[RMDB]
RNA sequence: GGGAACGACUCGAGUAGAGUCGAAAAGUAUGUGAAAGUGUAAAAUAGAAUGUUACUUUGGAAUGACUAUAAACAUUAAAAGAAGACUGGAAGCAUACAAACCUCCAAUUGCUUCGGCAAUUGGAGGCAUUCUAAAAGAGUUCGCUCUUUUAGAAUGAAAAGAAACAACAACAACAAC
Reactivity to 2A3 in 0.01 (KOAc 150mM, MgCl2 10mM, bicine 150mM(pH8.5), 24C), signal-to-noise 3, nucleotides 027 to 126: g000u010a000u020g140u020g030a030a050a020g010u030g020u210a070a060a080a060u130a080g140a050a030u020g020u050u030a100c090u090u080u050g030g110a240a100u100g080a050c030u050a030u060a270a060a030c020a000u040u050a100a060a070a040g110a090a030g030a020c000u010g030g010a040a020g000c000a010u010a020c020a030a110a060c020c010u040c020c020a010a000u000u000g000c000u010u020c100g070g000c020a000a010u010u000g000g000a000g010g000
Reactivity to DMS in 0.01 (KOAc 150mM, MgCl2 10mM, bicine 150mM(pH8.5), 24C), signal-to-noise 3, nucleotides 027 to 126: g000u000a020u000g010u000g000a300a150a030g010u010g030u020a060a100a150a080u000a130g010a060a060u010g000u000u000a110c140u000u000u000g000g000a200a130u010g030a160c090u010a090u010a070a050a010c000a010u000u000a030a030a080a170g000a200a160g000a010c020u000g000g000a080a190g010c000a020u000a010c020a040a080a210c000c000u010c000c000a000a010u000u000g020c030u000u010c280g020g000c000a010a000u000u000g020g010a010g000g000